[RMDB]
RNA sequence: GGGAACGACUCGAGUAGAGUCGAAAACGUGCAAACUCUUCUGCUAACUUAGCCGCAAAAAGUAGCACAAGCUUAAGUAACCUACCCGCUGUCAAAGAACAACAAGUUAGCGUGAACAACAACUCCACCAUGAAAAUCCAUUCGUGGAUUUUCAUGGAAAAGAAACAACAACAACAAC
Reactivity to DMS in 0.01 (KOAc 150mM, MgCl2 10mM, bicine 150mM(pH8.5), 24C), signal-to-noise 3, nucleotides 027 to 126: c140g030u010g010c030a080a060a080c170u000c190u000u000c040u010g000c010u000a070a070c080u010u010a140g020c030c110g020c160a040a060a040a080a050g020u000a110g010c010a070c050a050a110g010c100u000u000a050a070g000u000a050a050c010c040u000a110c050c020c050g040c110u010g000u000c060a050a060a080g000a060a050c090a020a110c090a040a050g010u000u000a030g000c040g010u000g010a020a070c090a030a040c050a050a110c070u000c050c060a170
Reactivity to 2A3 in 0.01 (KOAc 150mM, MgCl2 10mM, bicine 150mM(pH8.5), 24C), signal-to-noise 2, nucleotides 027 to 126: c050g000u040g020c050a020a070a130c030u030c050u210u000c010u070g000c020u030a030a090c030u050u180a040g030c020c040g030c050a060a070a040a040a010g040u050a010g000c010a010c000a080a040g000c020u140u090a090a040g040u050a140a090c020c000u010a040c020c000c030g020c040u000g030u070c050a230a060a070g050a170a050c030a020a020c020a040a060g010u020u020a000g040c050g090u050g020a000a030c030a010a010c010a000a040c030u000c030c020a030

Source: RMDB library OK2TST, as collected in RNAgym. Structure probing data (DMS and 2A3) for a 177-nucleotide construct. For 2A3 the reverse transcriptase was SuperScript II with manganese. High DMS reactivity at an A or C suggests that its Watson-Crick edge is free. DMS adducts were read by reverse transcription with MarathonRT. The reactions ran in a buffer of 150 mM KOAc, 10 mM MgCl2 and 150 mM bicine (pH 8.5), at 24 C. Values cover nucleotides 27 to 126.